Annotation:
Structure probing data (DMS and 2A3) for a 207-nucleotide construct. Source: RMDB library RNAMAK, as collected in RNAgym. Values cover nucleotides 27 to 156. The DMS profile rests on 5,715 reads. For 2A3, 1,968 sequencing reads were counted. For DMS the reverse transcriptase was MarathonRT. The reactions ran in a buffer of 150 mM KOAc, 10 mM MgCl2 and 150 mM bicine (pH 8.5), at 24 C.
RNA sequence: GGGAACGACUCGAGUAGAGUCGAAAAGAUAUGGAAACCUACCCACCUUGAUUCUGGUCUUGGAUUUAACGCUCGGAAACGAGCGUUUGUCAGACCAUGAUCAAGAGGGUUUCCUAAGUCAAAUCAUUAAUGGGAGGUUCGCCUCCCAUUAAUGAAAUACUACUCAUUGAUUCGUCAAUGAGUAGUAAAAAGAAACAACAACAACAAC
Reactivity to DMS in 0.01 (KOAc 150mM, MgCl2 10mM, bicine 150mM(pH8.5), 24C), signal-to-noise 3, nucleotides 027 to 156: g010a140u010a120u020g030g010a000a000a050c010c000u010a090c000c000c000a300c110c000u000u010g010a000u000u010c300u000g010g000u010c000u000u010g020g000a070u020u000u000a000a020c000g030c010u010c000g010g000a200a130a280c000g010a000g000c030g040u000u000u000g020u000c010a060g000a020c010c010a010u010g010a020u000c000a010a020g010a100g020g000g020u000u000u000c000c000u010a070a110g030u000c060a070a130a190u000c000a000u000u010a010a000u000g010g020g010a060g010g030u000u000c300g010c030c000u030c000c000c000a000u000u000a000a010u010g000a030a060a150
Reactivity to 2A3 in 0.01 (KOAc 150mM, MgCl2 10mM, bicine 150mM(pH8.5), 24C), signal-to-noise 1, nucleotides 027 to 156: g050a030u220a040u170g010g010a010a000a000c010c020u170a230c040c000c020a030c020c010u000u000g000a000u070u000c010u050g000g000u030c000u090u220g110g000a020u250u290u140a010a000c000g000c010u010c010g070g010a130a060a040c000g000a000g000c000g000u000u000u000g000u000c000a000g000a000c000c000a020u040g010a000u000c000a000a000g000a020g020g010g000u000u000u000c000c000u010a040a010g060u030c070a010a000a090u010c000a010u000u000a000a000u000g040g000g000a000g010g030u010u080c090g040c010c000u000c030c000c000a010u010u000a000a000u010g000a000a000a010